[RMDB]
RNA sequence: GGGAACGACUCGAGUAGAGUCGAAAAGCGCCCCUUUUCGAAGGGGCGCACUGGAAAUAAAGCCGAAAGGCUAGGCAUUCCUUAUUUGGCGAAUGCCUGCCACUAUUGAGAUCUUCGGAUCUCAAAACAGUACAAAAGGAUUCGUCCUUUUGUACUGAAAAGAAACAACAACAACAAC
Reactivity to 2A3 in 0.01 (KOAc 150mM, MgCl2 10mM, bicine 150mM(pH8.5), 24C), signal-to-noise 9, nucleotides 027 to 126: g000c000g010c010c010c000c000u010u030u020u090c190g100a010a010g010g010g000g010c010g020c000a000c010u020g030g100a030a080a090u160a090a110a010g040c010c020g050a090a050a040g010g000c030u030a010g010g000c000a010u010u050c010c000u120u140a300u210u230u260g110g020c120g010a000a000u000g000c000c000u000g010c000c010a040c020u090a170u090u080g000a010g000a000u000c000u020u020c110g080g000a010u000c000u000c010a000a010a000a010
Reactivity to DMS in 0.01 (KOAc 150mM, MgCl2 10mM, bicine 150mM(pH8.5), 24C), signal-to-noise 6, nucleotides 027 to 126: g010c000g020c000c000c000c000u000u000u000u010c150g000a020a020g010g000g010g020c010g000c000a000c050u010g010g010a090a100a060u000a040a070a060g010c000c010g010a110a080a140g010g010c000u000a010g000g010c010a010u000u000c000c010u000u000a180u010u010u010g010g010c150g000a010a000u000g010c000c000u000g000c010c010a090c250u010a130u000u010g000a010g000a010u000c000u000u010c190g020g000a010u000c000u000c000a000a020a080a170